[RMDB]
RNA sequence: GGGAACGACUCGAGUAGAGUCGAAAAACACCAAAACUGAAAACGGAAGGCAAUCCUUCCACGACGAUACUUACUUUCCUUUGAUCGUCGUUACUACUGGCAUAGCCACAAAGGAGGACAAACAUGAGCGCGGACACUGACUUCGGUCAGUGUCCAAGUGGUAGCGUAGCUUCGGCUACGCUACCACAAAAGAAACAACAACAACAAC
Reactivity to 2A3 in 0.01 (KOAc 150mM, MgCl2 10mM, bicine 150mM(pH8.5), 24C), signal-to-noise 2, nucleotides 027 to 156: a010c060a200c000c010a020a130a070a050c100u200g110a110a050a100a020c040g000g060a000a000g090g000c140a030a170u210c030c000u000u000c010c000a000c000g010a000c000g030a000u060a150c050u100u030a010c000u090u220u120c010c040u110u040u010g040a000u070c000g000u030c000g000u010u070a020c080u060a030c040u000g000g030c030a190u150a100g020c000c000a030c060a020a120a000g000g030a010g000g040a040c090a040a120a000c030a050u230g050a070g090c110g000c110g110g000a000c000a000c000u000g000a000c000u040u080c170g040g000u010c000a000g020u000g010u000c010c000a000a000

Conditions: 150 mM KOAc, 10 mM MgCl2 and 150 mM bicine (pH 8.5), 24 C.
An RNA of 207 nucleotides, treated with 2A3 and read out base by base.
2A3 adducts were read by reverse transcription with SuperScript II with manganese.
Reactivities are rounded to 0.1 and cut off at 0 and 3.